Source information
The record gives the reactivity of an RNA of 177 nucleotides to DMS and 2A3. Conditions: 150 mM KOAc, 10 mM MgCl2 and 150 mM bicine (pH 8.5), 24 C. For 2A3 the reverse transcriptase was SuperScript II with manganese. Source: RMDB library RFM100, as collected in RNAgym. DMS adducts were read by reverse transcription with MarathonRT. For DMS, 1,999 sequencing reads were counted.
RNA sequence: GGGAACGACUCGAGUAGAGUCGAAAAAUGAUAAGCAAAGUAAAGAGGCUUGCGUAAUUAUGACGCUACUGACAAAGAGACCAUGGUCUUCGUAUCGGAUGAAACGUGAGAUCCCAUUAAUGAAUGGCACUCGUGGUUUUUUCGAAAACCACGAGUGAAAAGAAACAACAACAACAAC
Reactivity to DMS in 0.01 (KOAc 150mM, MgCl2 10mM, bicine 150mM(pH8.5), 24C), signal-to-noise 2, nucleotides 027 to 126: a040u000g000a020u000a030a060g030c020a060a050a300g000u000a050a120a110g000a190g000g000c060u000u000g000c030g040u000a100a120u000u000a040u020g000a010c000g000c030u000a000c050u000g000a190c170a030a070a110g020a040g000a070c060c040a090u010g040g010u000c030u030u000c010g090u040a080u000c030g000g020a070u000g000a050a070a020c060g010u040g000a080g000a100u000c000c000c000a040u010u000a090a140u040g000a040a030u020g000g020
Reactivity to 2A3 in 0.01 (KOAc 150mM, MgCl2 10mM, bicine 150mM(pH8.5), 24C), signal-to-noise 2, nucleotides 027 to 126: a000u120g070a000u060a000a000g010c020a110a010a020g090u290a130a040a060g130a020g000g060c000u000u020g010c010g030u030a000a090u070u080a130u100g030a030c010g020c000u000a090c020u030g110a060c090a050a090a000g030a090g000a050c040c000a020u130g020g000u010c000u050u050c040g050u070a150u070c020g050g050a070u050g130a140a080a010c020g020u000g040a020g020a020u000c050c000c000a070u070u140a010a100u170g120a090a000u000g050g000